Notes: An RNA of 207 nucleotides, treated with 2A3 and read out base by base. The 2A3 profile rests on 1,611 reads.
[RMDB]
RNA sequence: GGGAACGACUCGAGUAGAGUCGAAAAAGGCACUCCAUACCCUACUCCGACUCAAAACGUCCCCGUCGUACAGAAUGGUAACAUAUCUCUCCAAAUAUCUGAGCUUGGGUAUACGGGGAAACCCAACAAAAGCAAUUGUGGUUCGCCACAAUUGCAACCUAGACUCAUUCUUCGGAAUGAGUCUAGGAAAAGAAACAACAACAACAAC
Reactivity to 2A3 in 0.01 (KOAc 150mM, MgCl2 10mM, bicine 150mM(pH8.5), 24C), signal-to-noise 3, nucleotides 027 to 156: a020g070g020c050a030c060u100c030c010a020u080a080c040c000c000u050a060c050u000c030c030g070a040c010u010c140a040a120a020a060c040g070u040c010c000c020c010g050u030c010g010u060a080c040a080g110a130a060u050g070g020u110a130a020c010a110u150a170u040c040u010c010u020c080c030a110a170a120u160a150u100c120u110g060a040g070c060u050u050g010g000g000u000a030u000a040c050g000g000g010g050a010a060a000c020c000c000a000a020c030a050a120a010a000g020c000a000a010u000u000g000u000g000g040u010u060c160g010c090c000a000c000a000a000u000u000g040c000a000a010
About this RNA:
The RNA was probed in 150 mM KOAc, 10 mM MgCl2 and 150 mM bicine (pH 8.5) at 24 C. It was measured as part of the RMDB library M2RFPK.